This 177-nucleotide RNA was probed chemically with 2A3 and DMS. For DMS the reverse transcriptase was MarathonRT. The DMS profile rests on 2,992 reads. Conditions: 150 mM KOAc, 10 mM MgCl2 and 150 mM bicine (pH 8.5), 24 C. For 2A3, 897 sequencing reads were counted. It was measured as part of the RMDB library OK1LIB.
RNA sequence: GGGAACGACUCGAGUAGAGUCGAAAAUGGCAGUGGGUAACCAUGAAUUUGACUUUGGAUACGAUCAGUUGAAAAAGUUAGAGGGUAUGUUAGACUUCCCGAUGCUAAGUACUAACGUUUACAAAGAUCCCUAACCGAAUUUCGAUUCGGUUAGGGAAAAAGAAACAACAACAACAAC
Reactivity to 2A3 in 0.01 (KOAc 150mM, MgCl2 10mM, bicine 150mM(pH8.5), 24C), signal-to-noise 2, nucleotides 027 to 126: u160g060g020c000a030g030u060g070g000g000u000a000a010c000c040a050u020g040a020a130u020u000u040g000a000c010u010u000u000g000g000a000u010a000c010g240a270u080c020a010g020u000u000g130a030a030a000a000a000g000u000u010a080g000a000g000g010g000u250a090u140g070u000u000a010g040a010c010u040u100c000c000c020g050a090u120g020c000u050a130a000g010u000a180c000u070a090a070c070g050u100u000u030a200c190a110a150a000g120a090
Reactivity to DMS in 0.01 (KOAc 150mM, MgCl2 10mM, bicine 150mM(pH8.5), 24C), signal-to-noise 3, nucleotides 027 to 126: u000g000g000c020a080g020u000g070g000g000u080a100a100c080c010a080u000g030a300a100u010u020u000g010a000c040u020u000u000g040g030a070u000a000c010g040a140u010c280a210g020u000u010g000a230a030a010a000a020g000u000u000a000g020a070g000g010g060u040a070u040g000u000u020a030g040a120c100u020u010c050c020c030g000a160u020g000c030u000a020a080g000u030a110c050u010a100a070c100g000u000u000u000a060c080a060a060a140g000a120